[RMDB]
RNA sequence: GGGAACGACUCGAGUAGAGUCGAAAACUGGAGGGAGCAGGUCCAAGGGGUCAAGGACAUGGGAUCCCAGGGGAACCAGAGACAAAGACACUAAGAUCAGAGAAUUGAGGGUCACUGGAGUCAUGACUACAUGCUGACAGUUCGCUGUCAGCAUGUAAAAAGAAACAACAACAACAAC
Reactivity to DMS in 0.01 (KOAc 150mM, MgCl2 10mM, bicine 150mM(pH8.5), 24C), signal-to-noise 1, nucleotides 027 to 126: c080u000g030g010a160g020g010g020a080g020c070a040g010g030u000c010c140a090a140g000g020g000g010u000c090a060a150g040g010a060c120a070u000g040g020g000a120u000c020c020c030a130g030g000g010g030a080a080c020c070a120g000a110g000a080c060a060a060a040g010a060c120a060c090u030a030a090g000a030u010c040a090g000a110g020a040a070u010u000g000a030g060g000g030u010c070a010c010u000g000g000a060g000u010c050a060u010g000a130c120